[RMDB]
RNA sequence: GGGAACGACUCGAGUAGAGUCGAAAAAGAGGGUCUUUAUCCAUUGUCUAGUUCACAUGCAUGAUUUUAAAAAAGGAAGCUGAGGCAGGAGGAUUGCUUGAGCCCAGGAGUUGGAGACUAGCCUAGGGAAUUCUUCAGGAUUCGUCCUGAAGAAUUCAAAAGAAACAACAACAACAAC
Reactivity to DMS in 0.01 (KOAc 150mM, MgCl2 10mM, bicine 150mM(pH8.5), 24C), signal-to-noise 3, nucleotides 027 to 126: a070g020a090g020g020g020u000c050u000u000u010a090u030c040c030a110u000u010g010u000c050u000a130g000u000u000c070a100c080a070u010g010c060a100u000g010a120u000u020u010u000a000a040a070a080a060a070g020g010a050a070g020c060u000g020a070g010g000c050a040g000g000a070g010g000a060u000u010g010c030u000u000g010a120g000c030c040c040a090g000g000a080g010u000u000g000g000a110g000a070c060u000a070g020c040c020u000a080g030g020
Reactivity to 2A3 in 0.01 (KOAc 150mM, MgCl2 10mM, bicine 150mM(pH8.5), 24C), signal-to-noise 2, nucleotides 027 to 126: a000g100a070g050g040g060u010c040u020u170u070a110u050c000c020a100u050u110g020u000c080u060a000g030u080u060c060a040c000a030u060g030c020a040u020g190a260u190u090u200u300a090a230a070a020a000a010g070g000a110a000g000c020u030g080a020g020g020c000a010g040g010a040g010g060a060u000u080g010c000u040u040g020a000g020c010c010c000a010g060g000a040g020u060u080g030g000a050g000a000c000u020a010g000c010c020u040a040g150g020